[RMDB]
RNA sequence: GGGAACGACUCGAGUAGAGUCGAAAAGAUAUGGAAUGAGAACAGCUUUUGACGUUGGAUCGGAAACGAUCCCGCGAUAAGCUGACAUUCCUAAGUCAAAACGGGAAGUACUUCGGUACUUCCCGAACGUUACGCAGUGCUUCGGCACUGCGUAACGAAAAGAAACAACAACAACAAC
Reactivity to 2A3 in 0.01 (KOAc 150mM, MgCl2 10mM, bicine 150mM(pH8.5), 24C), signal-to-noise 1, nucleotides 027 to 126: g000a000u000a010u110g000g010a010a000u020g030a030g130a300a120c000a010g020c020u200u230u300u300g180a080c000g060u040u000g000g010a010u000c000g000g000a050a010a000c000g000a000u000c000c000c050g000c010g090a260u170a300a000g000c020u000g010a000c000a000u000u000c010c000u020a020a010g020u000c040a030a040a070a110c020g000g000g000a000a000g010u000a000c000u050u080c220g110g000u000a010c000u000u000c070c000c000g000a060a000
The data come from the RNA Mapping Database (RMDB), library TTRDEL. An RNA of 177 nucleotides, treated with 2A3 and read out base by base.